[RMDB]
RNA sequence: GGGAACGACUCGAGUAGAGUCGAAAAUUAAAGAUCGAAAGAUCGCGAAACUCGCCGGCGCCGCUGUAGGCGGACCUUCAGCGACAGCGCCAGAACGAAUAAGGUCCGCACUACGAAAGUACAAAAACUUAGGGUUUAUGUUCGCAUAAACCCUAAGAAAAGAAACAACAACAACAAC
Reactivity to DMS in 0.01 (KOAc 150mM, MgCl2 10mM, bicine 150mM(pH8.5), 24C), signal-to-noise 2, nucleotides 027 to 126: u000u030a050a080a180g000a020u010c000g000a170a130a220g000a010u000c030g010c140g000a080a130a170c130u000c050g020c100c060g000g000c010g040c000c000g010c050u000g040u000a050g010g010c010g000g020a010c010c010u000u000c030a030g010c010g000a050c140a130g010c060g040c000c030a090g000a050a080c180g000a080a050u020a000a050g020g010u000c000c000g020c020a150c140u000a020c080g010a090a040a130g000u000a020c140a060a090a090a060a070